RNA sequence: GGGAACGACUCGAGUAGAGUCGAAAAAUGGCAACUAGUCAGACAUCUGUUUAGACACCAAAAUCAUUAUUUGUUUUCAUUCAUCUCAUUGGCCGUGUAGUUCAUGUCUAUGCCUCAUCCCGUUAUGGAAUCAAAGAGGAUUCGUCCUCUUUGAUUCAAAAGAAACAACAACAACAAC
Reactivity to DMS in 0.01 (KOAc 150mM, MgCl2 10mM, bicine 150mM(pH8.5), 24C), signal-to-noise 9, nucleotides 027 to 126: a080u010g010g010c030a080a120c120u010a090g010u010c080a040g000a100c110a080u010c070u010g010u000u010u010a070g010a080c080a110c060c050a040a050a070a050u010c100a060u010u010a100u000u000u010g000u010u000u010u010c070a080u010u020c060a060u000c030u010c080a080u010u000g010g000c030c060g020u000g000u000a040g000u000u010c050a040u000g000u000c030u000a160u010g000c020c010u000c100a110u000c000c000c010g010u010u010a100u010g010
Reactivity to 2A3 in 0.01 (KOAc 150mM, MgCl2 10mM, bicine 150mM(pH8.5), 24C), signal-to-noise 9, nucleotides 027 to 126: a000u060g010g000c020a050a030c070u080a050g070u080c040a000g030a060c010a070u090c060u040g090u070u100u110a060g020a040c020a020c040c000a020a050a060a070u130c080a070u040u170a090u120u130u090g140u040u070u040u050c060a070u080u040c010a060u020c040u010c040a090u050u100g040g000c030c030g030u020g020u050a060g030u030u050c040a040u070g020u010c010u030a060u090g010c000c000u040c020a050u030c000c000c000g000u050u090a120u230g100
This 177-nucleotide RNA was probed chemically with DMS and 2A3. The reactions ran in a buffer of 150 mM KOAc, 10 mM MgCl2 and 150 mM bicine (pH 8.5), at 24 C. DMS adducts were read by reverse transcription with MarathonRT. Reactivities are given for positions 27 through 126.